[RMDB]
RNA sequence: GGGAACGACUCGAGUAGAGUCGAAAACGGAGACAGAGAGCGCUUCUGGGUCGGAUCGGCGAGUCACGCGCCACCUCCCGGCAGCUUCGAGUCCGAGCCAGCCUCGAUGAGCGGCACAUCCGGGACGUAGUCGACCUCGUUGCUGUGCCAGUAAUCGACCAGGGAAUAGAUUCGUCUAUUCCCUGGUAAAAGAAACAACAACAACAAC
Reactivity to DMS in 0.01 (KOAc 150mM, MgCl2 10mM, bicine 150mM(pH8.5), 24C), signal-to-noise 2, nucleotides 027 to 156: c030g010g010a200g000a070c030a140g020a290g020a110g010c050g000c030u010u000c030u000g020g000g000u000c020g010g000a020u000c060g040g000c000g000a140g040u010c160a190c120g020c000g000c020c010a070c000c000u010c010c020c000g030g030c100a080g000c000u060u000c050g000a300g040u010c000c080g060a190g000c090c020a140g000c000c010u000c010g020a100u000g000a130g020c080g030g000c050a100c030a040u000c070c070g080g000g020a020c030g030u000a160g000u000c020g020a130c060c010u000c050g030u000u010g000c020u010g020u000g010c040c000a250g020u020a150a120u020c080g010
Reactivity to 2A3 in 0.01 (KOAc 150mM, MgCl2 10mM, bicine 150mM(pH8.5), 24C), signal-to-noise 2, nucleotides 027 to 156: c050g010g020a050g020a030c050a040g090a000g020a000g170c080g000c020u030u020c020u020g000g010g020u130c140g030g020a230u180c130g030g020c030g000a070g110u300c080a050c140g040c000g010c000c000a010c000c010u000c020c010c000g000g000c000a020g000c000u020u010c000g020a030g010u000c010c000g000a020g020c040c030a040g030c010c010u020c010g000a050u030g050a010g050c020g000g010c010a000c010a010u000c030c010g020g020g000a040c040g070u170a060g080u280c020g040a210c030c000u040c040g070u080u180g000c020u020g000u000g000c000c020a030g010u020a020a020u010c000g010
The record gives the reactivity of an RNA of 207 nucleotides to DMS and 2A3.
The 2A3 profile rests on 1,581 reads.
The data come from the RNA Mapping Database (RMDB), library OK3TST.
For DMS the reverse transcriptase was MarathonRT.